Chemical mapping of a 177-nucleotide RNA with 2A3 and DMS. 2A3 adducts were read by reverse transcription with SuperScript II with manganese. Reactivities are given for positions 27 through 126. In probing experiments dimethyl sulfate is read out at A N1 and C N3, which are open when not base-paired. As a SHAPE reagent, 2A3 marks flexible, mostly unpaired nucleotides at the ribose 2'-OH. For DMS, 4,925 sequencing reads were counted.

[RMDB]
RNA sequence: GGGAACGACUCGAGUAGAGUCGAAAAGAUAUGGACUAGCAUCGAUCUCUGAUACUGUUGAAGUCGGAAACGAUGGAAGUAUGGGAGGGAGCUAGUCCUAAGUCAAACUCAAGCUUCGGCUUGAGAAGGUAUUUCAUUUGUUCGCAAAUGAAAUACCAAAAGAAACAACAACAACAAC
Reactivity to 2A3 in 0.01 (KOAc 150mM, MgCl2 10mM, bicine 150mM(pH8.5), 24C), signal-to-noise 6, nucleotides 027 to 126: g030a020u060a050u140g010g000a000c000u000a000g000c020a230u300c060g070a140u030c020u000c010u070g190a010u010a020c020u040g300u300u140g120a070a020g010u000c010g000g050a060a070a030c020g000a010u040g000g050a010a020g010u010a010u030g170g000g010a010g010g020g000a020g000c000u000a000g000u010c000c000u000a000a000g000u000c000a040a040a050c000u000c000a010a000g010c010u060u260c300g160g000c000u000u010g000a010g010a020a020
Reactivity to DMS in 0.01 (KOAc 150mM, MgCl2 10mM, bicine 150mM(pH8.5), 24C), signal-to-noise 5, nucleotides 027 to 126: g020a030u000a300u000g010g010a030c000u000a000g020c010a300u000c170g000a060u010c000u000c000u000g010a040u000a000c000u000g010u000u010g000a210a210g000u010c010g000g000a110a080a160c010g000a000u000g000g000a100a010g010u000a010u000g000g000g000a010g000g010g000a020g000c010u000a010g010u000c000c000u000a000a040g010u000c020a110a150a190c000u010c000a000a010g000c000u000u020c210g000g000c000u000u000g000a010g010a050a050